[RMDB]
RNA sequence: GGGAACGACUCGAGUAGAGUCGAAAAGCAAAUAAGAUUUAGGGGAAGAAGAUGACAACCUUCUCCCGGUCUUCCCUGUUACGUGUGUAGACACAAUGAAUGUCAUCAAAACUAAAUAUACAAAAAACCAUCAAAUAGGGUUCGCCCUAUUUGAUGGAAAAGAAACAACAACAACAAC
Reactivity to 2A3 in 0.01 (KOAc 150mM, MgCl2 10mM, bicine 150mM(pH8.5), 24C), signal-to-noise 2, nucleotides 027 to 126: g050c030a090a060a280u280a240a070g040a090u080u050u240a070g020g020g010g000a020a020g000a030a050g020a020u010g010a010c010a010a010c030c000u020u010c030u050c000c000c000g000g010u000c000u000u010c010c000c000u030g070u110u210a090c100g000u070g000u000g060u120a050g130a280c020a010c000a010a000u100g070a070a040u020g010u030c010a010u030c020a180a000a000a000c030u060a060a060a130u300a070u070a130c090a030a100a030a000a040a030
Reactivity to DMS in 0.01 (KOAc 150mM, MgCl2 10mM, bicine 150mM(pH8.5), 24C), signal-to-noise 2, nucleotides 027 to 126: g020c060a070a110a130u010a140a060g000a160u000u000u010a070g040g010g000g020a030a010g010a300a060g000a040u000g000a000c030a090a080c040c000u000u000c030u010c000c030c090g000g000u010c010u000u000c000c010c000u000g000u000u010a040c160g050u000g000u010g040u030a120g010a040c010a030c010a140a040u040g000a020a070u000g000u000c020a000u010c020a060a130a130a110c140u010a040a060a070u010a040u000a070c010a000a070a140a050a020a030